The data come from the RNA Mapping Database (RMDB), library TTRDES. An RNA of 177 nucleotides, treated with DMS and read out base by base. Values cover nucleotides 27 to 126. The RNA was probed in 150 mM KOAc, 10 mM MgCl2 and 150 mM bicine (pH 8.5) at 24 C.
[RMDB]
RNA sequence: GGGAACGACUCGAGUAGAGUCGAAAAAAAGAUAUGGAGGGAAGGGAGGAUCAUAGAGCUAAGACAGUCCCUCGGAAACGAGGGAUCGAGCUCUAAUGAUCCGAAGAACUUCCCUCCUAAGUCAAAAGGGCAUUUAAUAGUUCGCUAUUAAAUGCCCAAAAGAAACAACAACAACAAC
Reactivity to DMS in 0.01 (KOAc 150mM, MgCl2 10mM, bicine 150mM(pH8.5), 24C), signal-to-noise 1, nucleotides 027 to 126: a170a070a100g000a020u020a300u000g000g000a020g020g000g040a010a000g040g000g000a110g000g000a020u000c000a000u000a020g010a000g000c010u010a200a050g020a120c300a100g020u000c000c000c020u000c020g000g010a110a070a140c000g000a000g020g000g000a000u000c060g020a000g020c010u010c000u000a030a010u020g000a000u000c000c000g000a020a100g000a200a210c010u020u000c000c000c030u000c000c000u000a020a030g000u000c020a020a040a060a190